[RMDB]
RNA sequence: GGGAACGACUCGAGUAGAGUCGAAAAACAGCAAGUGUGGAUCCUCAGAAUUAAAUUCAUCAAGAGGAAAUCCAGGAAUCUAAGACUGUUAAUGUAUCUCUGGACACUUGUUUGCUUCAGAGCCAACUCACCAAUUGUUCUUCGGAACAAUUGGUGAAAAAGAAACAACAACAACAAC
Reactivity to DMS in 0.01 (KOAc 150mM, MgCl2 10mM, bicine 150mM(pH8.5), 24C), signal-to-noise 1, nucleotides 027 to 126: a030c030a000g000c000a080a030g020u000g000u010g020g000a120u000c000c000u000c000a160g010a050a030u020u060a070a130a300u030u000c030a040u000c140a110a090g000a010g000g000a120a160a020u000c030c050a010g000g000a060a100u000c030u000a170a130g030a070c100u030g010u020u020a110a030u000g000u000a080u010c000u020c050u010g000g010a090c000a000c010u000u000g000u010u020u000g000c060u000u010c050a050g000a100g000c110c030a100a080c130
Reactivity to 2A3 in 0.01 (KOAc 150mM, MgCl2 10mM, bicine 150mM(pH8.5), 24C), signal-to-noise 1, nucleotides 027 to 126: a000c040a000g000c020a000a040g000u050g000u020g150g050a090u060c000c000u000c000a040g000a070a000u130u180a250a110a220u090u020c060a080u010c050a120a120g040a000g000g000a080a110a000u000c000c010a020g010g090a040a030u000c060u100a130a000g180a180c010u040g020u210u090a140a030u040g090u070a070u020c080u030c000u060g030g000a000c020a000c040u060u190g090u220u160u100g010c050u070u040c070a040g020a000g120c040c000a050a080c000
Source: RMDB library OK2TRN, as collected in RNAgym. This 177-nucleotide RNA was probed chemically with DMS and 2A3. DMS adducts were read by reverse transcription with MarathonRT. Conditions: 150 mM KOAc, 10 mM MgCl2 and 150 mM bicine (pH 8.5), 24 C. For 2A3, 792 sequencing reads were counted. 2A3 adducts were read by reverse transcription with SuperScript II with manganese.